[RMDB]
RNA sequence: GGGAACGACUCGAGUAGAGUCGAAAAGAUAUGGACCAGCUCCCCACCGUGGCAACGCGAAGAACAAGAAUGUAGUCGGAAACGACUACAUUCUUGGGAGCGUUGAUCACGAGGCUGGUCCUAAGUCCAUGUGAGAAUGCUUCGGCAUUCUCACAUGAAAAGAAACAACAACAACAAC
Reactivity to 2A3 in 0.01 (KOAc 150mM, MgCl2 10mM, bicine 150mM(pH8.5), 24C), signal-to-noise 1, nucleotides 027 to 126: g120a010u300a200u300g000g000a010c000c000a030g020c000u230c070c050c000c010a030c030c000g040u000g030g010c010a000a000c000g000c000g270a300a030g120a130a000c010a010a000g010a050a000u000g010u010a000g000u040c010g070g000a170a010a050c010g000a000c010u000a000c020a000u000u000c000u000u010g000g000g000a010g030c010g000u000u000g100a300u100c000a000c010g020a010g020g000c030u050g020g010u070c000c000u010a010a010g000u000c020
Reactivity to DMS in 0.01 (KOAc 150mM, MgCl2 10mM, bicine 150mM(pH8.5), 24C), signal-to-noise 1, nucleotides 027 to 126: g010a100u000a160u010g030g010a010c000c000a030g000c000u000c130c060c020c050a300c250c000g030u010g010g020c010a000a010c040g020c010g000a130a180g030a180a200c010a030a020g030a000a040u000g000u000a010g000u010c000g000g010a110a090a140c000g010a010c000u020a000c010a000u000u000c000u020u000g000g000g020a140g010c000g020u000u010g000a140u000c000a000c010g020a100g000g000c010u000g000g000u000c020c000u000a010a060g010u040c140